[RMDB]
RNA sequence: GGGAACGACUCGAGUAGAGUCGAAAAAUGAGAUGGUUGUGUGGAUAGAGGGAGUUCUAGGCAUCGGCAAAGUUACAUCUCUUUUCACUAUUGCGAUUAGCAACAGAGACCUGCACCUGUAUUCCCUGGGCCACUUAAUCAUUCUUGAGAGAAUGCACGUUCCAGAUUAAUUCGUUAAUCUGGAACGAAAAGAAACAACAACAACAAC
Reactivity to DMS in 0.01 (KOAc 150mM, MgCl2 10mM, bicine 150mM(pH8.5), 24C), signal-to-noise 2, nucleotides 027 to 156: a090u000g000a080g000a050u000g020g030u000u000g000u010g000u010g000g000a110u010a070g040a070g010g030g000a090g050u010u000c050u010a030g010g020c040a110u010c160g010g010c030a050a080a170g000u000u010a090c100a080u010c020u000c020u000u000u000u000c070a090c030u000a130u000u010g020c020g000a210u010u000a100g010c000a040a090c050a060g000a190g000a090c050c010u010g030c190a030c010c000u000g000u000a080u000u010c010c000c020u000g020g030g000c020c020a060c030u000u000a020a070u000c000a060u000u000c020u010u000g010a240g010a120g000a070a050u000g020c070a130
Reactivity to 2A3 in 0.01 (KOAc 150mM, MgCl2 10mM, bicine 150mM(pH8.5), 24C), signal-to-noise 3, nucleotides 027 to 156: a010u210g000a040g010a020u030g000g000u050u020g030u040g000u000g040g000a040u040a130g180a050g040g000g020a030g000u010u000c020u070a010g010g010c050a100u120c080g060g000c030a100a100a010g000u140u090a090c060a130u030c010u000c000u040u030u040u090c130a090c100u120a160u060u080g010c020g120a150u150u130a070g020c030a010a050c030a040g070a000g030a050c010c060u040g020c050a030c010c020u000g000u020a020u010u000c000c000c000u020g050g050g060c010c020a000c000u030u120a000a030u030c020a020u140u050c020u020u080g040a110g000a000g050a080a050u090g040c090a000
Notes: This 207-nucleotide RNA was probed chemically with DMS and 2A3. The data come from the RNA Mapping Database (RMDB), library OK3TST. For 2A3 the reverse transcriptase was SuperScript II with manganese. The reactions ran in a buffer of 150 mM KOAc, 10 mM MgCl2 and 150 mM bicine (pH 8.5), at 24 C.